[RMDB]
RNA sequence: GGGAACGACUCGAGUAGAGUCGAAAAUCUUUGGCUUUCGAGCCAAAGAGUGGGUGCAAUGUCCUUUAAGCACCAAACACGGAAAAACCGUGAAAGGUCAAAAAAAUCACAGUUUCGACUGUGAUAACACACACUGGGUAUUCGUACCCAGUGUGUGAAAAGAAACAACAACAACAAC
Reactivity to DMS in 0.01 (KOAc 150mM, MgCl2 10mM, bicine 150mM(pH8.5), 24C), signal-to-noise 2, nucleotides 027 to 126: u000c000u000u000u000g000g000c000u000u000u010c200g020a030g020c000c020a020a000a000g010a050g020u020g000g000g040u000g000c000a150a120u010g010u010c010c000u000u010u010a210a190g000c010a000c000c000a090a180a160c010a000c000g000g000a100a070a040a160a220c000c000g000u000g000a040a050a120g010g000u010c060a000a000a020a060a100a070a090u000c010a000c010a040g010u000u000u020c170g000a000c000u000g010u000g000a000u000a040a110
Reactivity to 2A3 in 0.01 (KOAc 150mM, MgCl2 10mM, bicine 150mM(pH8.5), 24C), signal-to-noise 1, nucleotides 027 to 126: u000c010u010u000u000g000g010c000u000u040u140c240g130a000g000c000c060a000a010a000g010a020g010u100g100g020g020u000g010c030a070a170u070g070u040c000c000u000u110u080a050a030g030c010a000c000c020a010a080a000c000a000c020g000g090a160a190a090a130a080c020c010g000u010g000a100a020a010g080g030u040c060a180a000a000a070a000a000a000u020c030a010c000a000g000u020u030u190c170g130a040c000u000g000u000g000a000u000a010a010